[RMDB]
RNA sequence: GGGAACGACUCGAGUAGAGUCGAAAACUGCGCUGAGCCCUUCUCCCCCAGCUUGCCUGUGUCCUAGGGAAUUGGAAGCUCAUCCUUCACAGGAUCGUGUGGAAGUCCUGCUCGGGGCGGAAGCAUUAUAAACCUUAGACGUUCGCGUCUAAGGUAAUCUAAGUAUCAUCUUCGGAUGAUACUUAGAAAAAGAAACAACAACAACAAC
Reactivity to 2A3 in 0.01 (KOAc 150mM, MgCl2 10mM, bicine 150mM(pH8.5), 24C), signal-to-noise 4, nucleotides 027 to 156: c020u070g020c050g000c090u120g030a040g000c010c010c050u160u080c070u080c020c000c020c010c000a010g020c010u050u090g060c010c000u060g020u010g030u140c000c020u030a050g000g040g060a080a120u140u090g050g020a080a020g010c000u010c010a040u030c000c000u080u090c030a030c000a060g040g000a050u060c060g030u010g010u020g070g020a040a020g030u020c020c010u010g060c030u090c100g010g000g020g000c000g020g010a010a000g000c010a010u080u020a070u120a090a130a010c000c000u000u000a000g000a000c010g040u050u010c220g010c000g080u000c000u000a000a010g000g000u000a000a000
Reactivity to DMS in 0.01 (KOAc 150mM, MgCl2 10mM, bicine 150mM(pH8.5), 24C), signal-to-noise 4, nucleotides 027 to 156: c030u000g010c020g030c060u010g000a100g020c020c020c040u010u000c070u000c010c010c010c020c020a110g000c050u010u000g010c010c020u010g020u000g030u000c020c010u010a180g040g020g020a060a070u000u000g030g020a140a140g030c060u000c080a090u020c010c000u010u000c140a140c080a080g020g000a050u000c080g010u000g020u010g020g020a250a160g000u000c020c020u000g020c060u000c080g040g010g030g010c030g020g030a160a130g020c030a090u000u020a100u000a100a120a060c000c000u000u000a010g000a010c000g020u000u000c300g040c030g020u000c000u000a000a010g000g020u000a000a010